[RMDB]
RNA sequence: GGGAACGACUCGAGUAGAGUCGAAAACGGUGCCGCUUGACAGCCUACGAGCCGGUCGCGUACCUGGGUCAACCGGUCACCUGCAGGCGCAGCUCGUCGUCUUACGCCACUCGCACUAACGCAGCAGACCGCGGGGACUGUUCGCAGUCCCCGCGGUAAAAGAAACAACAACAACAAC
Reactivity to 2A3 in 0.01 (KOAc 150mM, MgCl2 10mM, bicine 150mM(pH8.5), 24C), signal-to-noise 1, nucleotides 027 to 126: c040g000g000u050g020c010c000g030c000u010u160g100a060c000a020g060c000c010u110a130c040g000a010g020c040c040g000g050u080c070g000c080g120u060a030c000c000u050g030g000g010u020c030a040a040c050c050g040g020u080c020a050c060c000u010g070c070a060g110g060c060g000c030a050g020c030u020c030g090u050c000g010u000c000u010u010a020c040g070c000c020a130c010u050c020g000c060a030c060u200a090a000c080g070c080a020g000c000a020g100